Annotation
The record gives the reactivity of an RNA of 177 nucleotides to DMS and 2A3. For 2A3 the reverse transcriptase was SuperScript II with manganese. It was measured as part of the RMDB library TTRINS. The DMS profile rests on 1,176 reads. For DMS the reverse transcriptase was MarathonRT.

[RMDB]
RNA sequence: GGGAACGACUCGAGUAGAGUCGAAAAGAUAUGGACGAAACUACCCACCGUACCAUGGAUGUGGAGGAGAUUCGGAAACGAAUCUCUACCCACCCACAUCCAUGGUUACGAGGUUUCGUCCUAAGUCGGUUCUUCAUUAGUUCGCUAAUGAAGAACCAAAAGAAACAACAACAACAAC
Reactivity to DMS in 0.01 (KOAc 150mM, MgCl2 10mM, bicine 150mM(pH8.5), 24C), signal-to-noise 2, nucleotides 027 to 126: g020a180u000a200u040g020g020a010c010g030a000a010a030c010u030a130c050c000c000a300c120c000g010u000a010c010c010a010u000g000g000a000u010g000u000g070g000a140g030g020a010g000a010u000u000c000g010g020a200a110a290c000g000a010a020u010c000u000c000u000a090c060c040c180a300c120c010c000a010c000a030u000c000c000a000u000g000g000u000u000a010c000g000a070g030g000u000u000u000c030g040u010c010c010u000a000a060g000u010c090
Reactivity to 2A3 in 0.01 (KOAc 150mM, MgCl2 10mM, bicine 150mM(pH8.5), 24C), signal-to-noise 2, nucleotides 027 to 126: g210a170u300a220u300g000g020a020c010g020a020a000a000c040u300a300c000c030c020a020c000c010g000u020a000c010c010a010u000g000g010a000u010g000u000g010g010a050g050g000a000g000a000u000u000c020g000g040a060a100a070c010g000a010a000u000c000u000c000u040a030c040c030c000a080c000c010c000a000c000a000u000c010c000a000u000g020g000u020u080a000c000g010a020g000g040u000u000u000c000g010u000c010c000u000a020a020g300u190c130